[RMDB]
RNA sequence: GGGAACGACUCGAGUAGAGUCGAAAAGCUUUCAACAGAGGAAGAGAGCAAGAUAGAGGAGCCCCCGUGACGCUGGCAGCAUCGCGGACUGGGAGAAGAGAGGCGAAGAAAAGAAGGGGAGUCCCCGGUACCGGAGUGUUCGCACUCCGGAAAAGAAACAACAACAACAAC
Reactivity to 2A3 in 0.01 (KOAc 150mM, MgCl2 10mM, bicine 150mM(pH8.5), 24C), signal-to-noise 4, nucleotides 027 to 129: g010c030u010u150u090c060a100a060c040a050g060a010g080g010a070a010g030a010g000a000g000c050a050a010g020a050u190a020g020a030g020g020a020g000c000c000c000c000c040g030u030g030a010c020g010c020u050g090g040c040a020g010c010a050u050c010g000c030g040g000a010c070u110g000g000g020a110g010a050a000g040a000g020a000g040g000c090g020a020a000g010a010a050a000a010g050a020a030g010g020g000g010a000g030u070c010c010c020c020g020g010u010a030
Reactivity to DMS in 0.01 (KOAc 150mM, MgCl2 10mM, bicine 150mM(pH8.5), 24C), signal-to-noise 3, nucleotides 027 to 129: g000c100u010u020u030c070a110a140c140a150g040a090g040g000a030a080g020a080g030a070g020c000a030a130g030a060u030a110g010a020g040g000a100g000c050c030c040c010c130g050u050g030a020c040g000c050u030g040g020c150a110g010c070a060u010c040g020c070g030g000a120c090u050g030g010g010a110g030a080a060g000a130g010a010g000g000c160g020a050a020g030a040a040a070a040g050a000a000g040g000g030g000a090g000u020c070c010c000c070g030g040u020a080